Chemical mapping of a 177-nucleotide RNA with DMS and 2A3. The RNA was probed in 150 mM KOAc, 10 mM MgCl2 and 150 mM bicine (pH 8.5) at 24 C. Source: RMDB library M2PK50, as collected in RNAgym.
RNA sequence: GGGAACGACUCGAGUAGAGUCGAAAAACGACACAAUUCGUUGUGUCGUAAUGGAAAAGGCUAGGACCCGCCAGACAAAGGUCCGAAAAGAUCGAAAGAUCACACGCCACGAAUUCGUUCGUGGCAACGAUGUUGAAGUUUUCGAACUUCAACAUCGAAAAGAAACAACAACAACAAC
Reactivity to DMS in 0.01 (KOAc 150mM, MgCl2 10mM, bicine 150mM(pH8.5), 24C), signal-to-noise 3, nucleotides 027 to 126: a030c010g000a000c000a000c000a000a010u000u020c170g040u000u000g020u000g020u000c000g010u000a020a060u000g020g010a110a100a110a100g000g000c010u000a050g010g010a020c000c010c270g000c030c010a140g020a140c170a050a090a080g010g000u000c000c000g000a070a070a110a070g000a010u010c010g000a090a060a160g000a000u010c010a110c290a100c140g020c000c000a020c010g000a010a040u010u000c180g010u000u000c000g030u000g000g000c010a010a030
Reactivity to 2A3 in 0.01 (KOAc 150mM, MgCl2 10mM, bicine 150mM(pH8.5), 24C), signal-to-noise 4, nucleotides 027 to 126: a000c010g000a000c010a010c000a010a070u100u090c170g030u110u020g000u000g000u000c000g000u000a030a060u100g020g050a040a070a080a150g020g000c030u080a100g060g010a000c010c010c030g000c010c020a060g010a040c110a030a110a020g010g000u010c000c000g000a040a020a010a020g010a010u010c000g020a070a030a010g010a010u010c010a010c000a000c080g000c000c000a000c000g010a000a030u090u070c220g050u070u000c000g000u000g010g000c000a000a000